Record summary:
Structure probing data (2A3) for a 207-nucleotide construct.
RNA sequence: GGGAACGACUCGAGUAGAGUCGAAAAGGUGUCGACGGUCAGGUUCCACUUGUCGUUCACGACUCGGCUGCGCUCCAGCUCUUCACCGGCACGACGGCCCUUGGCCUCGACGUUGCCCAGGCGAUCCAGGCGGACCACGUUCGAGCCACGCAGGUCGCACCCACUAUGGGUUCGCCCAUAGUGGGUGAAAAGAAACAACAACAACAAC
Reactivity to 2A3 in 0.01 (KOAc 150mM, MgCl2 10mM, bicine 150mM(pH8.5), 24C), signal-to-noise 1, nucleotides 027 to 156: g020g010u010g000u020c010g020a010c160g020g060u080c070a110g020g000u140u230c010c030a100c040u010u240g000u010c010g000u010u080c230a200c200g050a020c080u020c090g020g000c000u160g030c020g000c100u050c000c000a010g000c010u000c000u130u090c050a030c050c050g000g020c050a020c030g140a020c050g000g000c000c000c040u010u080g020g010c000c000u000c000g000a030c070g010u020u180g000c000c000c020a000g000g000c000g010a010u020c010c000a050g020g070c010g030g110a010c020c020a180c130g090u300u300c050g030a030g000c040c000a130c110g070c050a010g000g000u140c040g000

For 2A3 the reverse transcriptase was SuperScript II with manganese.